[RMDB]
RNA sequence: GGGAACGACUCGAGUAGAGUCGAAAAGGAAGACAUGCAGCGCCAGUGGGCCGGGCUGGUGGAGAAGGUGCAGGCUGCCGUGGGCACCAGCGCCGCCCCUGUGCCCAGCGACAAUCACUGAACGCCGGAAUUCCCACGUAUUCGUACGUGGGAAUUCAAAAGAAACAACAACAACAAC
Reactivity to 2A3 in 0.01 (KOAc 150mM, MgCl2 10mM, bicine 150mM(pH8.5), 24C), signal-to-noise 1, nucleotides 027 to 126: g070g030a050a060g070a030c030a000u110g050c060a030g020c000g000c040c000a000g010u120g030g060g000c110c040g000g050g000c020u030g000g090u190g040g050a080g010a130a080g030g000u030g010c060a000g100g060c100u060g000c000c030g160u180g010g020g040c000a000c000c000a010g010c030g030c000c010g000c010c030c010c000u010g010u070g010c010c000c000a000g020c000g030a110c070a070a050u170c040a020c100u040g070a140a020c080g020c030c010g010
Reactivity to DMS in 0.01 (KOAc 150mM, MgCl2 10mM, bicine 150mM(pH8.5), 24C), signal-to-noise 2, nucleotides 027 to 126: g010g020a040a130g010a090c130a100u000g030c030a090g020c160g040c050c040a010g020u020g020g000g010c040c040g030g000g030c020u010g000g060u030g020g000a080g010a130a130g000g020u000g010c050a150g010g000c220u000g050c010c030g000u000g010g010g020c010a060c030c030a050g000c000g020c000c020g000c040c000c000c040u000g030u020g020c000c010c030a010g000c070g010a130c130a050a130u010c040a080c050u000g000a080a070c120g020c030c060g000